This 177-nucleotide RNA was probed chemically with 2A3 and DMS. For 2A3 the reverse transcriptase was SuperScript II with manganese. Source: RMDB libraries RFM100 and RFMREP, as collected in RNAgym. For DMS the reverse transcriptase was MarathonRT.
RNA sequence: GGGAACGACUCGAGUAGAGUCGAAAAAUGUGGCAUACUUCACCUCAUCAUAUUGUGUGGGGUUGAAAACUACAUUGAAACAAUUUGUUAAUCAAUAUAUUGAGGUGGAAUAUGCCACAUCAGCAGUUAAGUAUCUAUCCUUCGGGAUAGAUACUUAAAAAGAAACAACAACAACAAC
Reactivity to 2A3 in 0.01 (KOAc 150mM, MgCl2 10mM, bicine 150mM(pH8.5), 24C), signal-to-noise 5, nucleotides 027 to 126: a000u010g000u000g000g000c000a000u000a000c010u000u000c000a000c010c000u000c010a020u020c020a000u000a010u020u030g040u010g030u080g040g050g030g020u040u080g050a040a030a000a010c020u090a030c020a150u050u160g060a090a060a010c020a060a120u070u080u190g090u090u140a100a090u080c000a000a000u010a000u000a010u020u060g000a000g000g000u000g000g000a000a000u000a000u000g000c000c000a000c000a000u000c000a000g070c010a050g020u020
Reactivity to DMS in 0.01 (KOAc 150mM, MgCl2 10mM, bicine 150mM(pH8.5), 24C), signal-to-noise 3, nucleotides 027 to 126: a000u000g020u000g000g000c010a010u000a010c060u000u000c000a000c000c000u000c000a010u000c160a020u000a010u000u010g010u010g010u000g010g000g000g000u000u040g000a120a080a140a120c050u010a040c070a110u010u000g010a110a080a070c060a100a100u020u020u010g010u010u010a110a120u010c000a010a000u000a010u000a130u000u000g000a010g010g020u000g000g000a010a020u000a000u000g000c010c010a000c000a000u000c050a100g010c130a100g000u010